[RMDB]
RNA sequence: GGGAACGACUCGAGUAGAGUCGAAAAUGACGUUAAACUGCUGACUCAUACAUACUGACACCGGUUGCUCAACAGGCUGUGUGGGACAAUAGAAUAACAAGGCUGUCAAUUUGAGCUUGAUGGCUGCAAAACCUGCAGUACUUCGGUACUGCAGGAACAGAUGAAGUAUGUUCGCAUACUUCAUCUGAAAAGAAACAACAACAACAAC
Reactivity to 2A3 in 0.01 (KOAc 150mM, MgCl2 10mM, bicine 150mM(pH8.5), 24C), signal-to-noise 9, nucleotides 027 to 156: u120g050a020c080g010u030u050a050a070a050c040u060g020c030u040g050a070c000u010c020a010u020a040c010a010u100a050c030u070g060a050c030a050c110c050g100g020u100u120g040c040u040c060a040a050c010a050g040g000c020u010g010u010g000u020g030g000g010a010c020a030a040u060a070g080a060a030u060a050a020c040a070a050g030g000c000u010g010u020c000a000a010u050u070u180g040a020g030c000u000u000g000a010u000g020g000c000u040g000c050a020a030a040a150c000c000u000g000c000a000g000u000a000c000u010u040c130g040g000u000a000c000u000g000c000a000g000g000a000a000
Reactivity to DMS in 0.01 (KOAc 150mM, MgCl2 10mM, bicine 150mM(pH8.5), 24C), signal-to-noise 3, nucleotides 027 to 156: u000g010a110c090g000u010u010a030a070a250c040u000g040c020u000g010a130c010u010c010a060u000a050c000a090u010a100c020u010g000a090c070a080c040c010g020g050u000u000g010c010u000c030a040a040c030a060g000g020c050u010g010u000g030u000g010g000g020a130c030a060a100u000a070g000a080a220u000a030a070c040a090a200g000g010c010u000g030u000c020a030a060u010u000u010g010a130g000c300u000u000g000a050u000g010g000c010u000g000c070a060a040a070a130c000c010u000g000c000a010g010u000a010c010u000u000c270g070g020u000a000c010u000g000c000a000g000g010a020a050